RNA sequence: GGGAACGACUCGAGUAGAGUCGAAAAUAUUUCUGGCAAGAAAGUUAAUGAAAUGAGACAUUCUCCGACAAUAAGAACUCCUGUUCCAAUUAACAUUGGUUUCUUGCAUCCGAGUGUUUGAAGUAACCUACGAACCUAAAUUCGUUUAGGUUCGUAGAAAAGAAACAACAACAACAAC
Reactivity to 2A3 in 0.01 (KOAc 150mM, MgCl2 10mM, bicine 150mM(pH8.5), 24C), signal-to-noise 3, nucleotides 027 to 126: u010a010u030u130u000c020u010g040g010c000a000a030g030a070a040a010g050u100u080a060a020u080g060a090a060a040u120g020a040g010a020c030a100u140u000c040u000c030c030g070a060c070a060a110u140a140a030g020a040a010c030u050c070c050u060g050u060u000c020c000a050a070u070u060a090a030c020a040u000u140g040g020u040u020u000c000u000u010g000c010a010u030c040c020g020a040g050u060g020u020u070u090g040a060a010g050u080a010a050c020
Reactivity to DMS in 0.01 (KOAc 150mM, MgCl2 10mM, bicine 150mM(pH8.5), 24C), signal-to-noise 6, nucleotides 027 to 126: u000a070u000u000u000c020u000g010g000c030a050a030g000a030a060a160g000u010u000a030a030u000g010a090a060a060u010g010a080g010a060c140a170u000u000c010u000c050c080g010a090c160a060a090u010a090a080g000a060a100c280u000c030c060u000g000u010u000c010c020a070a060u000u010a040a070c070a100u000u000g010g010u010u000u000c010u000u000g000c030a060u000c050c100g000a040g010u000g010u000u000u000g010a040a100g010u000a070a090c170
The data come from the RNA Mapping Database (RMDB), library OK2TST. An RNA of 177 nucleotides, treated with 2A3 and DMS and read out base by base. The reactions ran in a buffer of 150 mM KOAc, 10 mM MgCl2 and 150 mM bicine (pH 8.5), at 24 C. DMS adducts were read by reverse transcription with MarathonRT. Reactivities are given for positions 27 through 126. 2A3 adducts were read by reverse transcription with SuperScript II with manganese.